[RMDB]
RNA sequence: GGGAACGACUCGAGUAGAGUCGAAAACAUGGAUCGUUCGCGAUCCAUGGCAGGUCGUGGUGGGACCAGCCGACCCAGGCUUUUGGCAUCCCAGCCUUUCCAAUCCAGCCUAUUUCGAUAGGCUGAACUAUUGUGAGUUGUUCGCAACUCACAAUAGAAAAGAAACAACAACAACAAC
Reactivity to DMS in 0.01 (KOAc 150mM, MgCl2 10mM, bicine 150mM(pH8.5), 24C), signal-to-noise 3, nucleotides 027 to 126: c020a010u000g000g000a000u000c000g030u000u010c180g030c020g000a000u000c000c000a000u000g000g000c130a070g000g000u000c040g000u000g000g010u010g000g000g000a130c050c020a050g010c020c020g010a100c100c070c050a160g000g020c040u000u000u000u000g000g000c060a090u000c020c020c010a140g000c010c020u010u000u000c010c030a100a180u010c130c000a010g000c000c000u000a010u000u000u020c160g010a020u000a010g000g000c010u000g000a020a130
Reactivity to 2A3 in 0.01 (KOAc 150mM, MgCl2 10mM, bicine 150mM(pH8.5), 24C), signal-to-noise 2, nucleotides 027 to 126: c000a000u000g000g000a000u000c020g020u120u050c230g020c000g120a000u010c020c000a000u010g000g000c050a030g020g050u080c040g140u160g060g050u040g040g050g000a040c020c010a010g010c010c020g080a170c050c060c060a060g000g030c000u120u120u160u190g020g000c020a060u050c000c010c010a030g050c000c020u020u020u000c010c010a040a080u040c030c010a000g010c000c010u000a000u030u110u020c080g070a030u000a000g000g000c000u000g000a000a010

Conditions: 150 mM KOAc, 10 mM MgCl2 and 150 mM bicine (pH 8.5), 24 C. This 177-nucleotide RNA was probed chemically with DMS and 2A3. The DMS profile rests on 4,746 reads. DMS adducts were read by reverse transcription with MarathonRT. The 2A3 profile rests on 4,752 reads.